This 177-nucleotide RNA was probed chemically with 2A3 and DMS. For DMS the reverse transcriptase was MarathonRT.
[RMDB]
RNA sequence: GGGAACGACUCGAGUAGAGUCGAAAAGGGUUCUGGAGGGCAGGGCUGGUGGUGGUUCCCUGAGUUGGUGACACUGGCUCCUCCCCCAGCCAGUUUGGCCUUUUGUGACCGGCGGCUUUGCCCUUCCAUAAGACCAGUUAUUCGUAACUGGUCUUAUAAAAGAAACAACAACAACAAC
Reactivity to 2A3 in 0.01 (KOAc 150mM, MgCl2 10mM, bicine 150mM(pH8.5), 24C), signal-to-noise 2, nucleotides 027 to 126: g120g010g010u050u060c040u050g030g010a000g000g000g000c020a020g000g010g040c020u200g070g300u010g030g040u040g030g030u080u010c010c020c000u060g090a140g100u130u070g020g000u050g040a010c000a000c050u010g010g000c000u020c010c040u120c000c000c010c000c000a000g000c000c010a000g020u020u020u090g070g020c010c000u020u090u090u180g150u080g050a010c010c010g030g030c000g020g010c020u000u010u030g010c010c000c000u010u000c000c000
Reactivity to DMS in 0.01 (KOAc 150mM, MgCl2 10mM, bicine 150mM(pH8.5), 24C), signal-to-noise 6, nucleotides 027 to 126: g010g010g010u010u000c040u000g020g010a030g000g000g000c010a020g000g000g010c010u010g000g010u000g000g010u000g010g010u000u000c010c010c000u000g010a090g010u010u000g010g020u000g000a140c220a050c000u000g000g000c000u010c090c090u010c010c000c000c010c110a090g000c000c000a020g000u000u000u000g010g010c010c010u000u000u010u010g010u010g000a040c000c010g000g000c010g000g000c010u000u000u000g000c010c000c000u000u000c010c280